[RMDB]
RNA sequence: GGGAACGACUCGAGUAGAGUCGAAAACACCAGAUGUUCGCAUCUGGUGAAAUACUCAAAAGCCGAAAGAGAACGGCAAACAGACGGCAGUGAAAGCCGAAAAAACUAGCCGGUUCGCCGGCUAGAACCAAUAGCACAACUUCGGUUGUGCUAUUGGAAAAGAAACAACAACAACAAC
Reactivity to DMS in 0.01 (KOAc 150mM, MgCl2 10mM, bicine 150mM(pH8.5), 24C), signal-to-noise 1, nucleotides 027 to 126: c000a000c000c000a000g000a000u010g010u000u000c220g030c010a000u000c000u000g000g000u020g010a030a070a020u000a080c020u000c080a040a090a160a090g000c000c010g010a050a120a090g000a250g020a160a050c020g020g000c000a020a120a130c180a190g010a200c000g000g010c010a080g000u000g000a050a100a160g000c000c000g020a000a040a010a060a050a080c010u000a000g030c020c010g000g020u000u020c290g020c000c020g000g040c020u000a000g010a010a130
Reactivity to 2A3 in 0.01 (KOAc 150mM, MgCl2 10mM, bicine 150mM(pH8.5), 24C), signal-to-noise 1, nucleotides 027 to 126: c000a000c000c000a000g010a000u000g020u070u070c180g000c090a000u010c000u000g000g010u000g000a000a000a000u050a020c000u000c020a020a000a030a160g000c000c000g170a090a120a010g230a030g010a120a040c020g000g000c000a110a020a000c050a020g190a080c010g010g000c000a040g000u020g300a150a010a040g000c000c000g120a070a010a000a000a000a020c000u000a010g000c010c020g000g000u040u030c190g000c110c000g010g060c000u000a000g000a000a000

Structure probing data (DMS and 2A3) for a 177-nucleotide construct. Values cover nucleotides 27 to 126. For DMS, 955 sequencing reads were counted. It was measured as part of the RMDB library M2PK50.